RNA sequence: GGGAACGACUCGAGUAGAGUCGAAAAGAUAUGGAUCAGAACUACGCAUAUUUCCGUCGUUGAAAUCGGAAACGAUGGAGACGGGUAGAUGCGCUGAUCCUAAGUCAAACACGCGUUCGCGCGUGAACGUAACAUCAUGCUUCGGCAUGAUGUUACGAAAAGAAACAACAACAACAAC
Reactivity to DMS in 0.01 (KOAc 150mM, MgCl2 10mM, bicine 150mM(pH8.5), 24C), signal-to-noise 3, nucleotides 027 to 126: g010a020u010a300u000g000g000a000u000c010a010g000a110a060c130u010a300c030g000c010a010u000a070u000u000u000c000c000g000u000c000g000u000u020g010a110a080a010u000c000g020g000a150a060a160c010g010a000u000g000g030a140g010a000c000g010g000g030u060a020g000a030u000g000c000g000c010u000g000a020u000c000c000u000a030a090g000u000c040a080a110a170c000a000c010g010c000g000u000u010c200g010c000g010c010g000u000g000a070a120
Reactivity to 2A3 in 0.01 (KOAc 150mM, MgCl2 10mM, bicine 150mM(pH8.5), 24C), signal-to-noise 3, nucleotides 027 to 126: g020a010u070a020u100g010g000a000u010c010a020g030a140a090c150u210a060c300g030c020a010u030a150u100u140u090c010c000g020u020c020g200u290u090g040a120a110a010u020c020g010g030a060a050a030c020g010a000u020g000g000a060g000a020c000g020g010g030u130a130g020a040u010g000c020g010c000u000g000a000u000c000c010u010a040a010g040u000c000a010a130a030c000a000c020g000c000g020u100u100c300g010c000g010c000g140u020g030a050a020

Overview:
Conditions: 150 mM KOAc, 10 mM MgCl2 and 150 mM bicine (pH 8.5), 24 C. Chemical mapping of a 177-nucleotide RNA with DMS and 2A3. Reactivities are given for positions 27 through 126. The 2A3 profile rests on 5,450 reads. 2A3 adducts were read by reverse transcription with SuperScript II with manganese. DMS adducts were read by reverse transcription with MarathonRT. Source: RMDB library TTRDEL, as collected in RNAgym.